Overview: The data come from the RNA Mapping Database (RMDB), library TTRDES. The record gives the reactivity of an RNA of 177 nucleotides to 2A3 and DMS. In probing experiments dimethyl sulfate is read out at A N1 and C N3, which are open when not base-paired.
RNA sequence: GGGAACGACUCGAGUAGAGUCGAAAAGAUAUGGAAGUAUUGUAGACAUGCUAUGGUCUCGGAAACGAGACUGCAUAGCAACAGCUACACUGUACUUCCUAAGUCAAACCAUCAGUUCGCUGAUGGAGUACCAUAAGUUGUUCGCAACUUAUGGUACAAAAGAAACAACAACAACAAC
Reactivity to 2A3 in 0.01 (KOAc 150mM, MgCl2 10mM, bicine 150mM(pH8.5), 24C), signal-to-noise 8, nucleotides 027 to 126: g010a020u050a030u120g000g010a000a010g000u010a020u050u160g010u020a030g030a090c150a300u300g010c000u000a000u010g020g000u000c000u000c000g000g000a040a040a020c010g010a000g000a000c010u020g050c020a010u000a000g020c030a060a030c070a030g030c000u010a000c000a020c080u080g010u040a000c000u000u000c000c000u000a060a000g020u000c040a060a060a120c020c000a000u000c010a010g090u070u270c300g010c200u000g000a000u000g010g030a030
Reactivity to DMS in 0.01 (KOAc 150mM, MgCl2 10mM, bicine 150mM(pH8.5), 24C), signal-to-noise 8, nucleotides 027 to 126: g000a030u010a300u000g000g010a010a000g010u000a010u000u000g000u000a010g020a050c120a290u010g020c000u000a000u000g000g000u000c000u000c000g010g000a080a080a130c000g010a020g000a010c020u000g030c060a000u000a000g020c000a070a070c300a130g000c000u000a000c000a050c300u000g000u000a010c000u000u000c000c000u000a030a100g010u000c030a090a170a180c010c000a000u000c000a000g020u000u010c300g020c010u000g000a020u000g000g000a150